RNA sequence: GGGAACGACUCGAGUAGAGUCGAAAAGAUAUGGAGCGUGCAGGCGAUAAGGAGGGAUCGGAAACGAUCUGCAACUCCUUUUGACGCCUGGCACGCUCCUAAGUCAAAGUCGUCGUUCGCGACGACACUUUGGAUUUGUGUUCGCACAAAUCCAAAGAAAAGAAACAACAACAACAAC
Reactivity to DMS in 0.01 (KOAc 150mM, MgCl2 10mM, bicine 150mM(pH8.5), 24C), signal-to-noise 4, nucleotides 027 to 126: g010a040u000a300u000g000g010a020g010c000g020u000g010c010a030g010g030c000g010a140u000a050a000g010g030a020g010g010g000a020u000c000g010g000a150a100a200c010g000a000u010c000u000g010c240a140a300c010u000c000c000u000u000u010u000g060a270c040g000c000c010u000g010g020c010a010c000g020c010u000c000c000u000a010a050g000u000c060a080a110a080g020u000c000g010u010c020g010u000u040c230g030c030g000a020c020g010a030c020a030
Reactivity to 2A3 in 0.01 (KOAc 150mM, MgCl2 10mM, bicine 150mM(pH8.5), 24C), signal-to-noise 2, nucleotides 027 to 126: g020a000u070a040u180g000g010a000g010c010g000u010g000c000a010g030g000c030g120a080u040a200a000g020g000a000g020g050g000a010u000c000g020g000a050a070a010c020g000a010u000c010u020g030c040a060a190c020u030c010c000u040u010u060u070g150a070c050g000c010c000u010g000g000c000a000c000g000c020u010c010c000u000a010a010g010u020c030a100a010a070g000u010c000g010u010c000g010u060u110c300g010c010g120a000c000g000a000c000a030
Chemical mapping of a 177-nucleotide RNA with DMS and 2A3. DMS adducts were read by reverse transcription with MarathonRT. For 2A3, 4,904 sequencing reads were counted. Reactivities are given for positions 27 through 126.